[RMDB]
RNA sequence: GGGAACGACUCGAGUAGAGUCGAAAAUCGGCAACAGUUCGCUGUUGCCGAAAAAACCGUAGGCGAGCCUGGACAUGAAUUUGUGUUCGAAAGAGCAUUUGUUCAACAGCCAGGGCUCGCCUAAACGGAAAAACGAGCUAGGUUCGCCUAGCUCGAAGGUUCAAAUACUAUUCGUAGUAUUUGAACCAAAAGAAACAACAACAACAAC
Reactivity to DMS in 0.01 (KOAc 150mM, MgCl2 10mM, bicine 150mM(pH8.5), 24C), signal-to-noise 1, nucleotides 027 to 156: u000c010g030g020c020a020a050c010a060g000u000u000c280g070c000u000g000u020u000g000c020c010g000a000a020a030a050a040a050c000c010g050u010a060g050g030c000g000a020g010c000c000u000g000g030a060c010a300u000g000a030a000u000u000u000g060u000g030u000u000c000g000a140a110a250g020a030g010c000a010u000u010u000g010u020u000c020a030a050c050a140g000c000c020a150g010g010g020c000u000c000g010c000c000u000a000a020a060c020g000g010a040a060a020a080a210c010g020a010g000c000u010a010g000g030u010u010c300g020c010c000u000a000g000c000u000c010g000a020a070
Reactivity to 2A3 in 0.01 (KOAc 150mM, MgCl2 10mM, bicine 150mM(pH8.5), 24C), signal-to-noise 2, nucleotides 027 to 156: u030c000g040g080c000a000a000c000a010g090u180u220c220g080c170u020g000u000u000g020c000c030g010a000a000a000a000a000a000c000c000g000u000a010g000g000c000g000a000g000c000c000u010g000g010a070c030a120u090g000a030a020u020u020u020g010u000g000u010u010c030g060a130a060a060g000a010g000c000a010u020u060u040g020u000u000c050a090a080c040a170g070c010c000a010g030g000g050c000u000c010g000c000c000u000a030a010a000c000g000g080a000a050a020a000a100c000g010a010g000c010u010a010g000g060u050u040c170g030c070c000u000a000g000c010u010c000g010a010a030

The record gives the reactivity of an RNA of 207 nucleotides to DMS and 2A3.
For DMS the reverse transcriptase was MarathonRT.
Conditions: 150 mM KOAc, 10 mM MgCl2 and 150 mM bicine (pH 8.5), 24 C.
2A3 adducts were read by reverse transcription with SuperScript II with manganese.
For DMS, 3,035 sequencing reads were counted.